[RMDB]
RNA sequence: GGGAACGACUCGAGUAGAGUCGAAAAUUUUCCGAUCUCGGAGAUCAUCGCCCAGACCCCACCAAUCCCUGACAUGGCGCAAUGGGGGAUAUUUCUGCGCAACCACGACGAGCUGACGUUAGAAAUGCCACCCUCCUUAUUUCGAUAAGGAGGGUGGAAAAGAAACAACAACAACAAC
Reactivity to DMS in 0.01 (KOAc 150mM, MgCl2 10mM, bicine 150mM(pH8.5), 24C), signal-to-noise 2, nucleotides 027 to 126: u030u000u020u020c020c000g010a110u010c070u000c070g000g010a150g000a100u000c080a100u000c090g040c010c000c000a080g040a130c030c000c010c020a070c070c040a160a130u020c070c000c000u000g000a100c210a030u000g000g020c100g000c020a030a040u000g020g000g020g030g070a060u000a050u030u010u000c010u010g010c000g000c020a090a100c020c050a040c110g010a040c080g000a110g030c040u000g000a140c070g090u020u000a030g000a000a060a050u000g000
Reactivity to 2A3 in 0.01 (KOAc 150mM, MgCl2 10mM, bicine 150mM(pH8.5), 24C), signal-to-noise 3, nucleotides 027 to 126: u060u020u040u020c020c000g040a140u090c120u050c040g080g020a040g010a040u020c010a010u060c050g040c000c030c010a030g070a080c000c020c000c000a040c020c040a040a040u050c030c000c000u020g010a050c010a080u130g020g000c020g000c040a040a080u050g040g000g000g020g000a010u040a070u040u040u040c030u030g010c030g000c020a010a050c010c030a050c060g070a010c020g020a030g020c020u060g030a040c030g020u030u030a070g030a090a090a050u170g040

The record gives the reactivity of an RNA of 177 nucleotides to DMS and 2A3.
Values are in units of 0.01, from 0 to 300, in steps of 10.
The data come from the RNA Mapping Database (RMDB), library OK1LIB.
Conditions: 150 mM KOAc, 10 mM MgCl2 and 150 mM bicine (pH 8.5), 24 C.
Reactivities are given for positions 27 through 126.
As a SHAPE reagent, 2A3 marks flexible, mostly unpaired nucleotides at the ribose 2'-OH.